RNA sequence: GGGAACGACUCGAGUAGAGUCGAAAAGAUAUGGAUCUGUGGGAGCAUCGAUCUACUGUGUCGGAAACGACAUGUAGGGAGCUCCCACAGAUCCUAAGUCAAAGGCGAGAAGUUCGCUUCUCGCCAAGCUAAAUUCGGAGUUCGCUCCGAAUUUAGCAAAAGAAACAACAACAACAAC
Reactivity to DMS in 0.01 (KOAc 150mM, MgCl2 10mM, bicine 150mM(pH8.5), 24C), signal-to-noise 1, nucleotides 027 to 126: g000a010u010a020u020g000g000a010u000c000u010g010u010g010g040g020a020g030c000a300u000c280g000a000u010c010u010a000c000u000g040u020g020u000c000g060g000a010a000a040c020g010a010c000a000u000g000u000a030g010g010g010a000g070c000u000c000c000c000a000c030a000g020a020u000c000c000u000a000a060g010u010c030a100a130a190g010g020c000g010a020g000a040a010g030u010u020c300g010c010u000u010c000u000c000g010c000c000a010a010